[RMDB]
RNA sequence: GGGAACGACUCGAGUAGAGUCGAAAAAUAAUGGUCGAUCAGCACGAAGGCGGAAUUCGCCAGAUAAACGAACAAGGACGCAAGACCGAAACCGCCCACGAAGACGAGGCCGAGGAAAUGACGGUCAAUACUGCAUUAUAUUCGUAUAAUGCAGUAUAAAAGAAACAACAACAACAAC
Reactivity to 2A3 in 0.01 (KOAc 150mM, MgCl2 10mM, bicine 150mM(pH8.5), 24C), signal-to-noise 7, nucleotides 027 to 126: a000u150a010a070u130g020g020u030c030g020a120u070c040a010g060c040a000c100g050a080a040g030g000c020g010g080a080a160u200u140c020g010c000c000a010g030a080u170a020a140a010c050g040a030a010c040a100a040g060g020a010c040g010c070a050a030g010a010c000c000g010a040a010a010c020c010g030c010c010c000a040c040g090a070a030g070a030c050g030a060g010g000c010c000g010a020g030g060a080a130a070u110g040a040c020g000g020u010c000a000
Reactivity to DMS in 0.01 (KOAc 150mM, MgCl2 10mM, bicine 150mM(pH8.5), 24C), signal-to-noise 9, nucleotides 027 to 126: a070u000a060a070u010g010g010u000c020g010a080u000c070a120g020c070a080c080g020a140a130g000g010c030g010g010a110a150u000u000c040g020c030c030a070g000a150u010a050a070a090c080g000a060a070c130a080a110g010g010a080c080g000c100a080a100g010a050c030c010g000a040a070a090c060c050g010c020c010c030a120c150g000a080a090g000a080c110g000a100g010g000c010c020g010a100g000g000a040a060a080u010g010a100c030g000g010u000c050a110